[RMDB]
RNA sequence: GGGAACGACUCGAGUAGAGUCGAAAAGGUGAAGAUUUCAUCGCAGCAGGUGAUACUGAUUCGGUAUAUGUUUGUGUAGAUAAAGUUAUUGAAAAAGUAGGUCUUGACCGCUUUAAAGAACAAAAUGAUUUAGUUGAAUUCAUGAAUCAGUUUGGUACGGAUGCCAUAUUUUCGAAUAUGGCAUCCGAAAAGAAACAACAACAACAAC
Reactivity to 2A3 in 0.01 (KOAc 150mM, MgCl2 10mM, bicine 150mM(pH8.5), 24C), signal-to-noise 2, nucleotides 027 to 156: g080g010u100g040a100a040g030a130u010u110u060c020a020u140c140g020c020a040g040c030a040g060g030u080g050a010u040a030c020u050g000a170u080u080c070g010g000u090a050u020a040u130g140u060u100u010g090u000g020u060a020g010a070u090a040a030a090g000u100u060a050u080u160g050a190a090a030a000a000g070u210a160g050g040u040c060u080u150g130a090c000c000g030c030u080u020u050a030a190a050g040a020a020c020a000a080a050a040u050g010a020u040u010u120a050g010u040u030g050a050a090u100u030c040a010u100g010a000a010u000c010a010g020u000u110u130g000g000u010a040
Reactivity to DMS in 0.01 (KOAc 150mM, MgCl2 10mM, bicine 150mM(pH8.5), 24C), signal-to-noise 1, nucleotides 027 to 156: g000g020u020g000a080a040g010a170u000u000u000c020a040u010c080g070c020a140g060c050a190g080g030u010g020a180u000a100c020u000g050a220u010u010c050g010g000u010a080u000a080u010g020u000u000u000g020u000g020u020a110g010a080u000a060a090a120g030u000u010a050u010u020g000a030a110a090a060a070g010u010a040g090g010u000c140u000u000g010a060c010c050g010c040u000u000u000a020a140a150g010a160a120c020a030a000a060a060u000g000a070u050u000u000a050g010u020u020g020a110a140u000u000c080a090u000g020a010a000u000c000a020g020u000u030u000g000g020u000a050
Conditions: 150 mM KOAc, 10 mM MgCl2 and 150 mM bicine (pH 8.5), 24 C. The record gives the reactivity of an RNA of 207 nucleotides to 2A3 and DMS. It was measured as part of the RMDB library OK3TST. As a SHAPE reagent, 2A3 marks flexible, mostly unpaired nucleotides at the ribose 2'-OH. Values are in units of 0.01, from 0 to 300, in steps of 10.